[RMDB]
Source: RMDB library M2RFPK, as collected in RNAgym. An RNA of 207 nucleotides, treated with 2A3 and read out base by base. Reactivities are given for positions 27 through 156. The reactions ran in a buffer of 150 mM KOAc, 10 mM MgCl2 and 150 mM bicine (pH 8.5), at 24 C.

RNA sequence: GGGAACGACUCGAGUAGAGUCGAAAACGACCUUAAACAGUUCUGGUGGUGCUCUGAAUGGAGUGCUCUACUGAGAUUAUAAAAUAGAAGGUAAGCUAUUAUCUCUUACAACAGGGCAGGCCUUGUUAAAAGCCUUUCAGUUUCGACUGAAAGGCAAUCAAGCUGGAAGUUUCGACUUCCAGCUUGAAAAAGAAACAACAACAACAAC
Reactivity to 2A3 in 0.01 (KOAc 150mM, MgCl2 10mM, bicine 150mM(pH8.5), 24C), signal-to-noise 1, nucleotides 027 to 156: c010g140a050c000c030u150u230a050a100a030c020a060g030u130u050c000u090g000g000u030g000g130u000g000c030u040c000u090g210a140a130u210g040g020a000g000u100g070c000u030c020u030a020c020u140g030a020g020a060u100u180a060u260a080a120a180a100u210a020g080a080a000g030g080u050a060a000g020c000u030a030u180u090a120u240c000u020c000u000u080a090c050a120a020c000a030g010g000g000c030a000g040g040c000c000u020u050g020u000u050a040a180a070a010g000c000c010u000u010u010c020a030g000u000u000u240c200g110a060c000u000g000a000a000a000g000g080c000a000a000